RNA sequence: GGGAACGACUCGAGUAGAGUCGAAAACGGAGGAUCUGCGGCGUCUCCUCAGCUACCUGAUCAGCAUUCCCAGCGACGCCGCCAAGAACCUCGGAUUCACAGUCAUCAUUGACAUGCGAGGCAAUGGAUAGUGUUAGCGGUUCGCCGCUAACACUAUAAAAGAAACAACAACAACAAC
Reactivity to 2A3 in 0.01 (KOAc 150mM, MgCl2 10mM, bicine 150mM(pH8.5), 24C), signal-to-noise 1, nucleotides 027 to 126: c040g060g000a000g020g000a010u030c050u300g000c000g000g000c010g030u040c020u000c010c000u020c000a000g010c010u060a130c040c100u150g030a300u130c130a020g080c020a030u030u000c020c020c000a010g040c010g000a000c010g000c000c000g030c000c000a010a020g040a020a080c000c000u010c000g010g090a150u160u100c110a090c040a060g010u010c010a120u060c010a120u070u300g040a010c020a030u070g160c010g000a000g020g000c000a040a040u090g080g000
Reactivity to DMS in 0.01 (KOAc 150mM, MgCl2 10mM, bicine 150mM(pH8.5), 24C), signal-to-noise 2, nucleotides 027 to 126: c120g010g030a010g010g000a030u000c070u010g030c000g000g000c010g000u000c020u000c010c000u000c050a140g020c000u000a100c150c080u030g050a160u010c160a130g060c060a120u000u000c000c000c000a160g010c180g030a000c000g050c000c020g040c000c080a030a030g010a190a110c000c000u010c000g000g020a040u000u000c180a250c110a090g000u000c040a030u000c300a170u010u000g000a070c050a060u000g030c020g010a010g000g040c080a090a020u000g020g000
Chemical mapping of a 177-nucleotide RNA with 2A3 and DMS. For 2A3 the reverse transcriptase was SuperScript II with manganese. Values are in units of 0.01, from 0 to 300, in steps of 10. For DMS the reverse transcriptase was MarathonRT. Reactivities are given for positions 27 through 126. The DMS profile rests on 1,193 reads. The RNA was probed in 150 mM KOAc, 10 mM MgCl2 and 150 mM bicine (pH 8.5) at 24 C. It was measured as part of the RMDB library OK2TRN.